[RMDB]
The record gives the reactivity of an RNA of 177 nucleotides to DMS and 2A3. 2A3 adducts were read by reverse transcription with SuperScript II with manganese. For 2A3, 893 sequencing reads were counted.
RNA sequence: GGGAACGACUCGAGUAGAGUCGAAAAAAUCGUGCGGAUUAAUAAUCCAGGACUAUAAAACCGUGUUGUUUAUAUCGAGUCUCUUUUGGUAUAAGCGUCAAGUCCAUCGGAGAGAUCAUCAUUUUGUUAAGGUGAGUUAUUUCGAUAACUCACCUUAAAAAGAAACAACAACAACAAC
Reactivity to DMS in 0.01 (KOAc 150mM, MgCl2 10mM, bicine 150mM(pH8.5), 24C), signal-to-noise 2, nucleotides 027 to 126: a080a020u020c060g000u000g000c140g000g020a000u000u020a130a100u030a150a250u010c000c000a130g030g000a020c010u000a070u010a050a040a060a110c030c030g010u010g000u000u000g000u000u000u000a030u020a050u010c080g000a080g000u000c080u000c050u000u000u010u030g020g010u020a030u020a080a090g010c010g000u020c080a050a040g000u020c020c040a090u000c020g010g000a030g000a090g010a050u000c080a070u000c070a030u020u030u020u030g000u010
Reactivity to 2A3 in 0.01 (KOAc 150mM, MgCl2 10mM, bicine 150mM(pH8.5), 24C), signal-to-noise 2, nucleotides 027 to 126: a000a000u220c080g000u080g050c010g000g000a000u030u040a020a050u190a040a010u010c000c000a100g000g030a000c020u070a050u170a180a040a000a100c040c080g010u000g040u110u050g000u020u050u000a080u010a000u070c040g030a080g090u010c030u000c000u070u010u050u160g020g000u060a050u010a090a070g000c020g030u030c040a030a040g020u030c020c020a020u070c030g040g000a010g000a000g020a140u010c000a010u000c030a060u070u080u110u090g070u020